Annotation:
The record gives the reactivity of an RNA of 177 nucleotides to 2A3 and DMS. For DMS the reverse transcriptase was MarathonRT. The 2A3 profile rests on 9,076 reads. The RNA was probed in 150 mM KOAc, 10 mM MgCl2 and 150 mM bicine (pH 8.5) at 24 C. 2A3 adducts were read by reverse transcription with SuperScript II with manganese.
RNA sequence: GGGAACGACUCGAGUAGAGUCGAAAAUCGUCGAGGCGUGGUAUAUGCGGCACGGUUGGCCCCGGUAGCGGCCGGGUGCUGGGCAUAGCGGGCGCGCGCGUAGGUGGCGCUGUCAGUACCGACAUCGCGGCAUAGGUAUAUUCGUAUACCUAUGCCGAAAAGAAACAACAACAACAAC
Reactivity to 2A3 in 0.01 (KOAc 150mM, MgCl2 10mM, bicine 150mM(pH8.5), 24C), signal-to-noise 7, nucleotides 027 to 126: u110c010g070u020c020g030a060g020g050c060g030u100g030g040u090a100u010a010u220g040c020g010g010c060a030c060g070g030u120u150g070g000c000c000c020c000g100g000u060a100g080c130g030g020c010c000g010g000g000u100g000c000u040g020g070g000c060a070u070a050g030c040g010g040g000c020g000c010g000c010g000c010g030u060a060g000g120u050g030g000c010g000c010u030g050u070c020a040g030u050a090c020c020g020a020c020a080u090c040g010
Reactivity to DMS in 0.01 (KOAc 150mM, MgCl2 10mM, bicine 150mM(pH8.5), 24C), signal-to-noise 4, nucleotides 027 to 126: u030c050g020u010c040g010a050g000g000c020g020u020g010g020u010a050u010a040u000g010c040g000g000c040a040c040g000g000u020u010g020g020c000c010c030c030g010g020u010a080g010c170g000g000c010c000g000g000g010u020g020c010u010g000g030g020c030a040u030a050g010c060g000g000g000c050g010c040g020c040g010c040g010u030a110g000g020u020g010g010c010g010c030u010g020u000c060a100g010u010a100c060c020g000a050c090a070u030c090g010